RNA sequence: GGGAACGACUCGAGUAGAGUCGAAAAUGGUGCCGAACGUCGCUCGACACGGGGGUGGCCCGGCCACCCUUUGCGCACCUUGGCACCGACCAUGAGACGUCGUGUGUGCCGAACGCCGUUUCCGGCACUAACUUACAAACUUCGGUUUGUAAGUUAGAAAAGAAACAACAACAACAAC
Reactivity to 2A3 in 0.01 (KOAc 150mM, MgCl2 10mM, bicine 150mM(pH8.5), 24C), signal-to-noise 9, nucleotides 027 to 126: u170g020g000u020g000c000c000g020a050a030c040g030u040c020g020c040u050c060g060a040c030a030c090g020g000g000g010g010u010g000g020c110c270c060g110g010c010c010a010c000c000c000u020u050u040g020c050g010c000a060c020c000u010u050g030g000c010a030c070c020g020a050c010c010a100u150g070a030g030a100c060g030u070c020g010u070g020u020g010u020g090c000c010g010a040a010c030g020c030c010g010u010u030u030c050c020g010g000c010a000
Reactivity to DMS in 0.01 (KOAc 150mM, MgCl2 10mM, bicine 150mM(pH8.5), 24C), signal-to-noise 9, nucleotides 027 to 126: u030g010g010u000g010c000c000g000a030a040c130g010u010c040g010c030u010c060g010a080c060a040c070g010g000g000g000g030u000g000g000c010c160c180g020g010c000c000a010c000c000c000u000u000u010g010c030g010c110a140c120c100u010u010g000g010c010a060c040c040g000a090c010c040a110u020g010a100g000a100c090g000u000c020g010u010g010u020g020u000g000c010c000g000a040a030c030g000c040c020g000u000u010u010c080c070g010g010c020a090